The record gives the reactivity of an RNA of 177 nucleotides to DMS and 2A3.
DMS adducts were read by reverse transcription with MarathonRT.
Source: RMDB library OK2TST, as collected in RNAgym.
2A3 adducts were read by reverse transcription with SuperScript II with manganese.
The reactions ran in a buffer of 150 mM KOAc, 10 mM MgCl2 and 150 mM bicine (pH 8.5), at 24 C.
[RMDB]
RNA sequence: GGGAACGACUCGAGUAGAGUCGAAAAAGCAGCGCAUCGAAUGUCGCGUGGAACUUGUCGGCCACCUCACCGGGUAGCGGCUCCCCGCCGAUGGGUACCCGCUGCAACGUCCGCCACUGGCUCACACCGAAUGCGACAAAUUCGUUUGUCGCAUUCGAAAAGAAACAACAACAACAAC
Reactivity to DMS in 0.01 (KOAc 150mM, MgCl2 10mM, bicine 150mM(pH8.5), 24C), signal-to-noise 3, nucleotides 027 to 126: a070g000c030a090g010c060g020c070a090u000c060g020a090a070u010g000u000c130g020c070g000u020g010g010a090a040c070u000u000g020u020c020g020g000c030c050a060c040c030u010c100a120c190c090g000g000g020u000a060g020c040g000g040c040u000c040c010c030c100g010c120c020g010a060u000g030g000g010u000a050c110c050c000g010c040u000g060c020a080a150c080g000u000c070c070g000c030c040a070c050u000g010g010c020u000c100a070c120a110c070
Reactivity to 2A3 in 0.01 (KOAc 150mM, MgCl2 10mM, bicine 150mM(pH8.5), 24C), signal-to-noise 2, nucleotides 027 to 126: a010g060c070a020g000c010g030c060a040u070c010g080a210a070u120g050u120c020g010c020g060u100g020g000a080a040c040u110u100g020u080c040g050g000c020c030a040c000c020u090c010a110c030c030g020g010g060u020a040g050c010g000g010c000u070c040c010c010c000g040c040c010g100a080u070g020g000g060u020a040c010c000c010g000c000u010g000c020a040a000c040g040u030c030c010g000c000c030a060c060u040g020g000c000u060c050a070c010a020c040